[RMDB]
RNA sequence: GGGAACGACUCGAGUAGAGUCGAAAAUUAAUGUCUAGAUACUCCCUCAUGUAUGAAGAGAAACUGGAUUAUACUGAUAGCAGAGGUAGUAGGCAUCUUAGGUAUAACCUGGAUUUUAGAUCAAUUGACGAAUACAAGGUUUCGACCUUGUAUUCGUAAAAGAAACAACAACAACAAC
Reactivity to DMS in 0.01 (KOAc 150mM, MgCl2 10mM, bicine 150mM(pH8.5), 24C), signal-to-noise 4, nucleotides 027 to 126: u020u030a060a030u020g000u000c000u010a050g010a120u020a080c040u000c050c010c040u000c030a090u020g000u030a030u030g000a130a060g000a090g000a070a100a070c120u010g020g010a100u010u020a070u040a040c030u020g000a150u040a110g020c120a060g010a080g000g020u010a040g010u000a050g000g010c080a040u000c040u010u030a050g000g020u000a070u030a060a050c020c000u000g000g000a070u000u030u020u000a030g000a060u020c070a030a080u010u000g010
Reactivity to 2A3 in 0.01 (KOAc 150mM, MgCl2 10mM, bicine 150mM(pH8.5), 24C), signal-to-noise 4, nucleotides 027 to 126: u110u080a060a110u090g010u000c010u020a030g040a140u080a040c010u090c010c060c010u010c070a050u060g130u160a070u070g080a090a050g110a020g050a080a150a030c050u130g050g010a030u070u090a090u130a150c030u100g070a080u080a120g060c070a010g020a030g060g000u060a010g010u000a000g050g000c000a010u000c030u080u180a050g000g020u130a030u050a160a050c000c010u020g050g050a080u170u070u000u140a140g040a120u130c070a100a090u110u170g070
An RNA of 177 nucleotides, treated with DMS and 2A3 and read out base by base. The data come from the RNA Mapping Database (RMDB), library OK1LIB.